An RNA of 177 nucleotides, treated with 2A3 and DMS and read out base by base. Values are in units of 0.01, from 0 to 300, in steps of 10. The reactions ran in a buffer of 150 mM KOAc, 10 mM MgCl2 and 150 mM bicine (pH 8.5), at 24 C. It was measured as part of the RMDB libraries RFM100 and RFMREP. For 2A3, 1,047 sequencing reads were counted.
RNA sequence: GGGAACGACUCGAGUAGAGUCGAAAAAAAGUUGGAUUAAUUGGUGACUAAAGAUUCCCAACAAGACGGGGGAGAAAUUACCCCCACACGAUAUUCAAGAUCACUGCAUCGGUAGAAUAUCGUGACCAGAAGGAAGUACUUUCGAGUACUUCCUUCUAAAAGAAACAACAACAACAAC
Reactivity to 2A3 in 0.01 (KOAc 150mM, MgCl2 10mM, bicine 150mM(pH8.5), 24C), signal-to-noise 3, nucleotides 027 to 126: a000a000a000g070u080u020g040g010a170u130u110a100a070u220u080g110g040u130g110a010c040u160a160a050a000g030a010u020u040c040c000c000a000a060c070a060a000g130a080c100g010g000g000g050g110a080g120a020a300a110u130u070a110c020c000c000c040c000a010c000a000c000g000a000u000a010u000u010c030a070a070g000a060u000c070a080c300u300g050c090a020u030c000g130g070u120a060g000a010a000u000a000u000c000g000u000g020a040c000c080
Reactivity to DMS in 0.01 (KOAc 150mM, MgCl2 10mM, bicine 150mM(pH8.5), 24C), signal-to-noise 4, nucleotides 027 to 126: a070a030a050g010u000u000g020g010a130u020u030a070a070u020u000g030g020u030g000a090c040u010a030a080a140g040a200u000u000c010c000c000a070a110c210a040a060g020a080c200g000g000g000g000g000a060g020a040a030a070u030u020a130c010c000c000c000c010a170c000a000c000g040a010u000a000u000u000c020a300a090g010a010u000c010a160c240u030g000c170a010u000c010g000g020u020a080g000a020a010u010a000u000c010g000u000g000a030c170c100